This 207-nucleotide RNA was probed chemically with 2A3.
The RNA was probed in 150 mM KOAc, 10 mM MgCl2 and 150 mM bicine (pH 8.5) at 24 C.
Reactivities are given for positions 27 through 156.

[RMDB]
RNA sequence: GGGAACGACUCGAGUAGAGUCGAAAAAUAACUGAACAAAUUUUGAAUCAUCAAAUGAAUCAUCACUAUCCGAAUCGCUAUCAGGCUCUGUAGAAUCAUCAGAAUCAGUAGUAGGCAGACAAUCAGAAUCUGAUGCUUUAAGGUCGAUAGUAGGUUCGGUGAAAUGCCAAUUCGUUGGCAUUUCACCAAAAGAAACAACAACAACAAC
Reactivity to 2A3 in 0.01 (KOAc 150mM, MgCl2 10mM, bicine 150mM(pH8.5), 24C), signal-to-noise 1, nucleotides 027 to 156: a010u080a000a040c010u050g160a080a010c040a080a110a180u070u170u240u110g040a150a040u070c070a060u030c140a260a050a000u070g090a100a030u140c020a030u030c000a110c110u110a120u130c090c030g000a000a000u000c000g020c000u040a010u040c030a040g020g000c050u080c050u300g020u040a060g120a050a030u020c000a030u000c020a040g080a020a030u030c030a000g030u090a010g060u010a010g210g130c050a060g070a160c040a060a190u170c020a040g040a040a020u000c000u020g000a000u000g030c000u040u040u070a090a000g000g000u000c000g000a000u000a000g040u010a280g000g000u000u000c000